The record gives the reactivity of an RNA of 207 nucleotides to DMS and 2A3. Reactivities are given for positions 27 through 156. The DMS profile rests on 4,472 reads. Values are in units of 0.01, from 0 to 300, in steps of 10. Conditions: 150 mM KOAc, 10 mM MgCl2 and 150 mM bicine (pH 8.5), 24 C.

RNA sequence: GGGAACGACUCGAGUAGAGUCGAAAAGUGCGACCUUCGGGUCGCACCUCACUCCUAAGUCAACGGGAGCUGUUAUUCGCGAAGAACUCGGAAACGAGGGAGCGAAGAAGCAGCGACGAUCGUUGAUAUGGAUACCUUCCAACCUUCGGGUUGGAAAGUAUCUGAAACUAUUCGUAGUUUCAGAUACAAAAGAAACAACAACAACAAC
Reactivity to DMS in 0.01 (KOAc 150mM, MgCl2 10mM, bicine 150mM(pH8.5), 24C), signal-to-noise 3, nucleotides 027 to 156: g030u000g010c000g010a020c000c000u000u000c300g050g010g040u000c010g080c000a020c000c000u000c050a100c110u010c040c010u000a040a270g020u010c030a030a030c010g020g000g000a180g020c000u010g010u010u000a300u000u000c000g000c010g010a120a150g020a140a150c020u000c000g000g020a240a150a180c020g020a050g010g000g000a270g020c000g000a020a020g000a180a300g010c000a040g010c010g000a100c070g000a040u000c020g020u000u000g010a040u000a180u000g010g010a110u000a040c030c020u000u000c010c010a010a020c000c010u020u020c300g040g020g050u000u010g000g000a000a000a070
Reactivity to 2A3 in 0.01 (KOAc 150mM, MgCl2 10mM, bicine 150mM(pH8.5), 24C), signal-to-noise 7, nucleotides 027 to 156: g000u000g000c000g000a000c020c000u060u120c270g080g000g000u010c000g000c000a000c000c000u020c000a070c060u010c000c000u040a170a050g020u000c000a000a000c000g000g000g010a020g000c000u110g230u300u020a060u010u010c010g000c020g110a300a080g020a070a050c000u000c010g020g040a080a070a080c010g000a000g010g000g010a020g000c000g000a000a010g010a030a010g000c000a000g000c010g100a050c000g020a030u020c000g000u000u000g010a000u010a030u070g010g000a020u070a120c000c010u000u000c000c000a000a000c000c000u050u050c270g110g000g000u000u010g000g000a010a000a010